[RMDB]
RNA sequence: GGGAACGACUCGAGUAGAGUCGAAAAGGGGUCAACUCGAAGAACAUAACAGGAACUACAGGGACAUGCUGAAGCCUCCACGGCAACAGCCCUGUAAGAGUAAGGUUAUGGGAGAGUUGACGGAGGCACCCAAAAGAACAAAGUUCGCUUUGUUCAACACAUUCAAAGUGUUCGCACUUUGAAUGUGAAAAGAAACAACAACAACAAC
Reactivity to DMS in 0.01 (KOAc 150mM, MgCl2 10mM, bicine 150mM(pH8.5), 24C), signal-to-noise 2, nucleotides 027 to 156: g020g070g030g040u000c000a030a000c010u000c030g010a150a140g000a190a210c050a100u000a000a010c050a140g030g040a170a180c060u000a030c010a030g040g020g050a030c050a300u000g010c000u000g000a060a130g020c000c010u000c030c020a200c050g030g000c000a100a100c050a070g000c000c000c000u000g000u010a010a060g000a150g010u000a170a130g030g000u000u000a000u000g010g000g030a250g030a030g040u000u000g000a020c050g020g000a030g080g040c010a170c000c000c000a050a050a110a190g010a030a060c010a000a060a020g000u000u000c270g020c010u000u000u000g010u000u000c010a120a260
Reactivity to 2A3 in 0.01 (KOAc 150mM, MgCl2 10mM, bicine 150mM(pH8.5), 24C), signal-to-noise 4, nucleotides 027 to 156: g080g010g010g000u010c010a010a000c000u010c020g160a260a060g030a100a020c010a010u020a010a000c020a040g260g070a110a090c050u030a010c030a010g000g010g050a040c050a160u180g000c020u020g030a130a030g000c020c000u000c060c060a030c060g020g000c000a060a050c040a180g010c000c000c000u010g010u020a070a050g050a010g030u090a060a090g120g000u000u000a000u000g010g010g030a090g000a000g000u000u000g000a000c000g000g010a000g020g000c010a040c020c000c000a010a130a020a060g000a000a000c000a000a000a020g010u070u120c190g060c140u000u000u000g000u000u000c000a020a030
The record gives the reactivity of an RNA of 207 nucleotides to DMS and 2A3. Values are in units of 0.01, from 0 to 300, in steps of 10.